[RMDB]
RNA sequence: GGGAACGACUCGAGUAGAGUCGAAAAGAAGAGCAGUCAGAUAAUCUUGUGCAGGAUGAAUGCUCGUAACUUCAUAGCACAAGUAGAUGUAGAUAACUUUAAUCUCGCAUAGCGGAGGAGCCGCAGAACCCUCCUCAUACUUCGGUAUGAGGAGGGUAAAAGAAACAACAACAACAAC
Reactivity to 2A3 in 0.01 (KOAc 150mM, MgCl2 10mM, bicine 150mM(pH8.5), 24C), signal-to-noise 3, nucleotides 027 to 126: g080a040a020g020a010g050c080a000g070u050c000a000g040a180u160a220a130u140c000u000u000g000u000g000c000a030g050g190a070u010g000a070a050u110g010c050u070c090g010u000a000a070c010u030u010c020a050u020a030g010c000a000c000a000a000g020u000a020g010a070u120g080u050a040g020a140u050a110a020c000u010u050u070a030a150u030c000u000c000g060c080a140u090a140g020c040g000g010a030g070g030a020g090c000c000g000c000a000g070a040
Reactivity to DMS in 0.01 (KOAc 150mM, MgCl2 10mM, bicine 150mM(pH8.5), 24C), signal-to-noise 2, nucleotides 027 to 126: g000a140a020g000a110g040c040a100g020u000c000a120g000a160u030a110a120u050c000u000u000g010u000g000c000a160g000g010a030u000g000a010a040u030g030c110u040c300g000u020a040a090c040u000u000c000a040u010a100g000c000a010c000a010a020g000u000a070g010a030u020g000u000a010g000a030u020a080a110c080u010u000u010a060a110u050c000u020c060g050c110a070u040a110g020c050g000g020a170g000g020a140g010c000c040g000c030a080g000a090
An RNA of 177 nucleotides, treated with 2A3 and DMS and read out base by base. Source: RMDB library OK1LIB, as collected in RNAgym. For 2A3, 2,508 sequencing reads were counted. Reactivities are given for positions 27 through 126.